Structure probing data (2A3 and DMS) for a 177-nucleotide construct. For DMS, 810 sequencing reads were counted. Source: RMDB library OK2TRN, as collected in RNAgym. Reactivities are given for positions 27 through 126. The RNA was probed in 150 mM KOAc, 10 mM MgCl2 and 150 mM bicine (pH 8.5) at 24 C. The 2A3 profile rests on 1,359 reads.

RNA sequence: GGGAACGACUCGAGUAGAGUCGAAAACGCUAUCGCUCGGGCGUUUGGACCGUGGCUGGGUGGUGGCCUCCGAAACGGCCGCACUCGACAUCGUCGGCGCCUCGUUCGUCCGUGAUAUCGAACCGGGGGUGAGUGACAUGUUCGCAUGUCACUCACCAAAAGAAACAACAACAACAAC
Reactivity to 2A3 in 0.01 (KOAc 150mM, MgCl2 10mM, bicine 150mM(pH8.5), 24C), signal-to-noise 1, nucleotides 027 to 126: c040g080c040u060a000u130c050g030c060u030c030g040g000g030c040g030u070u080u140g260g020a020c000c040g040u010g000g040c200u070g010g030g000u050g040g110u110g070g000c000c010u070c020c080g160a150a150a100c090g000g000c000c020g000c000a000c000u000c000g000a040c010a100u060c010g030u040c040g020g010c020g050c050c010u070c030g030u060u050c010g050u030c050c020g030u050g020a020u050a030u050c070g030a100a060c000c010g030g030g030
Reactivity to DMS in 0.01 (KOAc 150mM, MgCl2 10mM, bicine 150mM(pH8.5), 24C), signal-to-noise 1, nucleotides 027 to 126: c090g010c110u020a070u020c050g040c080u020c050g010g020g000c020g020u000u000u020g030g030a070c020c070g030u000g010g050c090u000g010g010g000u000g040g030u010g040g000c020c000u000c100c060g040a020a070a300c270g000g020c010c000g010c030a040c010u010c000g000a070c010a020u000c300g010u000c010g010g000c040g000c050c000u000c040g000u000u010c010g000u030c150c030g000u000g020a090u010a050u000c040g000a090a240c050c030g000g000g000